[RMDB]
RNA sequence: GGGAACGACUCGAGUAGAGUCGAAAAGGGUACGACAUGUCUAGACGUAGACCAUGCGAUCCACAUCUAGCGUACAGUACUGUCUGAUCUCAUGCGCUGAUCAGUGUCAUGGAGUGUGCUCACGCAGCCAGCCCGAUGGAUUCGUCCAUCGGGCUGGAAAAGAAACAACAACAACAAC
Reactivity to 2A3 in 0.01 (KOAc 150mM, MgCl2 10mM, bicine 150mM(pH8.5), 24C), signal-to-noise 1, nucleotides 027 to 126: g040g020g000u020a090c000g040a030c080a060u050g050u060c040u020a020g000a120c030g160u010a000g000a040c040c050a110u140g010c100g020a070u010c020c030a010c000a040u030c060u060a020g000c010g020u010a030c030a060g010u030a000c020u000g090u110c090u040g090a140u000c040u060c030a060u150g000c050g000c030u060g010a190u110c080a050g060u000g030u060c030a030u050g100g070a080g000u090g000u040g020c020u010c000a100c030g040c000a000g020
Reactivity to DMS in 0.01 (KOAc 150mM, MgCl2 10mM, bicine 150mM(pH8.5), 24C), signal-to-noise 2, nucleotides 027 to 126: g000g000g000u010a020c010g010a230c180a030u010g000u000c000u000a020g010a080c090g000u000a010g010a050c050c030a120u010g010c140g020a030u000c050c020a030c040a060u000c020u000a020g000c060g010u010a040c220a300g020u000a010c040u000g010u030c020u020g000a110u000c000u010c050a050u000g000c070g020c060u000g000a060u000c100a020g010u000g000u010c060a060u000g020g030a040g010u000g010u000g010c040u000c030a110c120g010c070a080g010